[RMDB]
RNA sequence: GGGAACGACUCGAGUAGAGUCGAAAAUACAUCCGUUCGCGGAUGUAAAAAAACCGUAGGGACCUCGUUUAGCAACAGCUCCUACUUCGAAAGAGGUACAUGGAGACAUGCUAUUGAGGUCCCUAAACGGAAAAAACCCUCACUUCGGUGAGGGUAAUACAACAUAUGGUUUCGACCAUAUGUUGUAAAAAGAAACAACAACAACAAC
Reactivity to DMS in 0.01 (KOAc 150mM, MgCl2 10mM, bicine 150mM(pH8.5), 24C), signal-to-noise 2, nucleotides 027 to 156: u000a000c000a000u000c010c010g050u010u030c300g030c030g030g010a050u030g010u030a010a020a040a070a070a030a060c000c010g010u000a060g000g020g010a030c000c000u020c010g020u010u000u000a020g000c020a040a030c090a070g000c000u000c000c000u000a010c010u000u020c000g020a160a210a190g000a040g010g010u000a020c180a080u000g000g010a030g000a120c100a300u000g000c010u000a020u000u000g020a040g000g020u010c010c000c000u000a000a020a030c010g000g020a000a050a060a030a120a030c000c000c000u010c000a010c010u000u010c300g080g020u000g010a030g000g030g030u020a000a000